[RMDB]
RNA sequence: GGGAACGACUCGAGUAGAGUCGAAAAUCGACGUUCAUCAGCAAGGAUCUCCGGACCACCAUCAAUUGGUUGUCCUGACCCAUCGAGCACUCGACCCAACAGGUCCUCGGUGACUUUCAUCUUGAGCGUCUCACCAGAGAAACGCACCGACGCAUUCAAUGUUAGAGGGUUUCGACCCUCUAACAUUAAAAGAAACAACAACAACAAC
Reactivity to DMS in 0.01 (KOAc 150mM, MgCl2 10mM, bicine 150mM(pH8.5), 24C), signal-to-noise 2, nucleotides 027 to 156: u000c040g020a020c020g020u000u010c020a070u020c020a100g030c080a070a060g000g030a100u010c010u000c050c080g000g010a010c010c050a040c030c000a090u010c130a090a170u010u000g000g020u000u000g000u000c010c020u000g030a060c040c020c020a150u000c050g010a070g000c050a050c050u000c020g020a100c010c030c030a090a110c130a300g020g000u000c020c010u000c050g060g090u000g020a120c030u010u010u010c040a100u000c010u000u000g010a070g000c010g010u000c030u000c050a220c010c040a160g000a230g010a110a070a050c030g030c010a080c030c040g010a050c050g030c030a190u000u010c030
Reactivity to 2A3 in 0.01 (KOAc 150mM, MgCl2 10mM, bicine 150mM(pH8.5), 24C), signal-to-noise 4, nucleotides 027 to 156: u100c040g030a010c030g000u050u020c020a070u010c020a040g090c030a040a100g060g010a110u040c020u030c060c050g000g000a020c030c080a000c010c000a060u110c120a090a300u240u050g010g000u000u010g000u010c000c010u020g010a020c040c000c000a010u030c020g000a000g010c050a050c140u110c080g020a030c000c030c000a070a040c070a060g040g010u030c010c010u000c010g030g000u030g060a090c010u080u130u080c070a210u010c030u010u080g020a030g010c010g050u030c040u050c030a050c020c000a020g030a000g040a070a080a050c080g020c030a040c100c030g060a070c040g060c060a020u160u150c040